Structure probing data (2A3 and DMS) for a 177-nucleotide construct. Reactivities are given for positions 27 through 126. It was measured as part of the RMDB library RFMREP. For DMS the reverse transcriptase was MarathonRT. The DMS profile rests on 2,183 reads. Conditions: 150 mM KOAc, 10 mM MgCl2 and 150 mM bicine (pH 8.5), 24 C.
RNA sequence: GGGAACGACUCGAGUAGAGUCGAAAAGUCUGGUAUAGUGCAACAGCAGAACAAUUUGCUGAGGGCUAUUGAGGCGCAACAGCAUCUGUUGCAACUCACAGUCUGGGGCAUCAAGCAGCUCCAGGCAGUCCAUGUAUAUCUUCGGAUAUACAUGGACAAAAGAAACAACAACAACAAC
Reactivity to 2A3 in 0.01 (KOAc 150mM, MgCl2 10mM, bicine 150mM(pH8.5), 24C), signal-to-noise 4, nucleotides 027 to 126: g030u010c040u060g040g070u190a080u070a100g070u090g140c060a080a050c000a050g030c020a010g040a130a070c110a250a300u030u070u100g000c000u020g010a050g030g050g010c000u000a060u040u200g020a010g000g020c020g000c030a000a030c000a000g070c020a140u090c060u050g010u030u010g000c010a020a020c010u000c010a040c030a040g000u020c000u000g000g000g010g020c030a030u110c010a040a120g110c090a020g010c020u000c000c000a010g010g000c000a020
Reactivity to DMS in 0.01 (KOAc 150mM, MgCl2 10mM, bicine 150mM(pH8.5), 24C), signal-to-noise 3, nucleotides 027 to 126: g020u010c020u000g010g030u010a040u000a040g020u010g010c070a110a140c020a020g010c040a030g020a120a120c180a120a090u000u010u000g030c010u000g000a200g000g010g010c010u020a090u010u000g010a030g010g000c300g000c030a010a020c000a050g020c250a140u000c020u010g030u000u000g010c000a040a160c040u000c030a040c300a080g010u000c000u000g000g000g010g000c000a050u000c130a070a160g000c240a050g000c000u000c000c000a000g000g000c010a070